[RMDB]
RNA sequence: GGGAACGACUCGAGUAGAGUCGAAAAGCUACUACCCGGUGGAAACAACUGAAGCUUCAACGCCUUUUUUUCCUAUCUUCUUUAGCACCGGGCUAGGGAGUAAGCCCGUGGAACCUUAGUUUUGUUCCCUCGGGACUUACUUGUGGUUCCUGUGGUGCAAUGUAACGUUGUUCGCAACGUUACAUUGAAAAGAAACAACAACAACAAC
Reactivity to 2A3 in 0.01 (KOAc 150mM, MgCl2 10mM, bicine 150mM(pH8.5), 24C), signal-to-noise 6, nucleotides 027 to 156: g020c030u070a050c010u030a010c040c010c010g000g000u040g020g110a160a110a070c050a030a040c110u080g060a080a000g030c020u210u150c120a130a070c090g070c020c030u090u060u060u030u020u100u100c060c010u090a160u130c070u150u030c010u050u180u150a050g020c010a010c000c000g010g010g000c010u020a020g010g040g010a010g000u010a010a020g010c000c000c000g010u010g000g010a010a010c010c030u090u050a140g030u210u210u190u200g040u060u020c020c000c020u070c020g040g000g050a080c000u000u000a000c000u010u020g050u050g070g020u060u100c000c020u040g080u090g030g040u060g010
Reactivity to DMS in 0.01 (KOAc 150mM, MgCl2 10mM, bicine 150mM(pH8.5), 24C), signal-to-noise 1, nucleotides 027 to 156: g010c070u010a060c040u000a050c000c000c020g000g040u000g060g000a180a100a070c070a090a190c090u010g010a120a120g020c090u000u010c090a060a090c150g010c020c000u000u000u000u000u000u000u000c030c020u000a060u000c060u000u000c050u000u000u000a150g000c030a030c030c010g020g020g020c040u000a050g000g020g000a060g000u000a040a050g010c000c000c010g020u000g020g000a010a020c000c090u000u000a110g000u000u000u000u000g020u000u000c030c000c030u000c090g000g020g020a040c010u000u010a010c010u000u000g030u000g020g040u000u000c010c010u000g010u000g030g000u000g020